[RMDB]
RNA sequence: GGGAACGACUCGAGUAGAGUCGAAAACAAACAAAGACACUAUGUGGAUCAGCAGAAUAAAUAAAUAAUGUAGUGUCGAUAGAUUUUGCUGAUGAGUCUAGAACAAACAAUUGAGGAAAACUCAUAAGGGUAAAGUAUUCUUCGGAAUACUUUACCCAAAAGAAACAACAACAACAAC
Reactivity to 2A3 in 0.01 (KOAc 150mM, MgCl2 10mM, bicine 150mM(pH8.5), 24C), signal-to-noise 3, nucleotides 027 to 126: c040a000a100a000c000a030a190a000g010a000c000a000c020u040a000u140g130u140g150g080a100u070c000a000g110c040a030g070a140a080u220a230a040a040u180a010a070a030u160a070a070u110g000u010a010g020u000g020u010c000g010a000u030a020g040a000u000u050u050u130g000c010u040g060a090u120g010a040g010u010c020u110a080g050a210a090c050a040a060a010c040a030a280u000u080g000a000g030g050a040a230a140a170c000u000c020a020u030a020a120
Reactivity to DMS in 0.01 (KOAc 150mM, MgCl2 10mM, bicine 150mM(pH8.5), 24C), signal-to-noise 2, nucleotides 027 to 126: c130a120a070a090c190a040a070a050g000a000c000a010c000u000a000u000g000u020g000g020a060u000c010a040g000c020a060g020a080a080u020a130a090a090u050a080a080a080u030a140a050u000g040u000a040g000u000g000u000c000g000a100u020a040g000a030u070u010u000u000g030c000u000g030a010u010g000a040g050u030c080u050a090g010a300a000c170a030a060a060c170a030a090u000u000g000a030g000g000a180a080a160a090c040u040c000a000u020a050a110